[RMDB]
RNA sequence: GGGAACGACUCGAGUAGAGUCGAAAAACUAGGAGUGCUACGGCACUCCUAGAACGCAAGCCUGUUGGGCGUGAUUUAUGCUUGUCAUAGUUACUCUGAGAAGUGCCAUGCGUACGCGCAUGGCACAUGGCAAGAUUCAAUUCGUUGAAUCUUGCCAAAAAGAAACAACAACAACAAC
Reactivity to DMS in 0.01 (KOAc 150mM, MgCl2 10mM, bicine 150mM(pH8.5), 24C), signal-to-noise 2, nucleotides 027 to 126: a130c000u000a000g010g010a000g040u010g020c000u010a120c280g050g000c030a010c000u000c000c010u000a020g000a030a060c160g000c160a180a090g010c000c010u030g010u000u000g010g000g010c040g050u020g000a030u000u030u020a020u000g010c050u030u020g000u040c010a010u000a060g020u030u000a010c070u010c070u000g000a090g000a100a080g040u010g000c040c000a010u000g010c000g020u000a080c250g020c040g000c010a010u000g000g000c000a000c020a000
An RNA of 177 nucleotides, treated with DMS and read out base by base. It was measured as part of the RMDB libraries RFM100 and RFMREP.